[RMDB]
Source: RMDB library OK2TRN, as collected in RNAgym. The record gives the reactivity of an RNA of 177 nucleotides to DMS and 2A3. The DMS profile rests on 1,475 reads. For 2A3, 930 sequencing reads were counted. Values are in units of 0.01, from 0 to 300, in steps of 10. Values cover nucleotides 27 to 126.
RNA sequence: GGGAACGACUCGAGUAGAGUCGAAAAAGGAAAGAAGCUAAUAGAAGCUCCACGUAUGAGCUGCCCACUCUGCGCCAGGCACUCUGCUGGCAGACACUGUGCAUAUCCUACAACUCUUCGCCAUGGGCAGGAAGGGUAUCUUCGGAUACCCUUCCUGAAAAGAAACAACAACAACAAC
Reactivity to DMS in 0.01 (KOAc 150mM, MgCl2 10mM, bicine 150mM(pH8.5), 24C), signal-to-noise 2, nucleotides 027 to 126: a090g010g000a100a120a070g000a100a050g000c060u010a080a160u020a150g000a120a100g010c000u000c030c080a110c150g020u030a080u000g030a020g020c030u010g020c030c030c020a170c050u000c060u000g020c060g000c070c070a080g010g000c030a050c050u010c050u010g010c050u000g010g010c030a050g010a070c060a060c060u000g000u010g000c060a050u000a090u010c010c020u000a030c130a040a090c050u000c080u000u000c060g030c020c030a100u010g000g020g000
Reactivity to 2A3 in 0.01 (KOAc 150mM, MgCl2 10mM, bicine 150mM(pH8.5), 24C), signal-to-noise 1, nucleotides 027 to 126: a000g070g000a050a000a080g090a170a010g010c030u060a100a050u090a300g090a130a000g010c010u000c000c000a030c010g030u110a110u140g010a000g050c030u060g000c050c000c010a010c020u050c010u030g000c020g000c030c010a030g040g070c060a050c100u090c030u070g010c000u030g060g020c000a010g000a020c010a000c020u020g000u030g090c030a050u050a040u210c010c000u020a050c010a120a050c000u000c050u140u070c060g000c090c000a120u140g010g040g060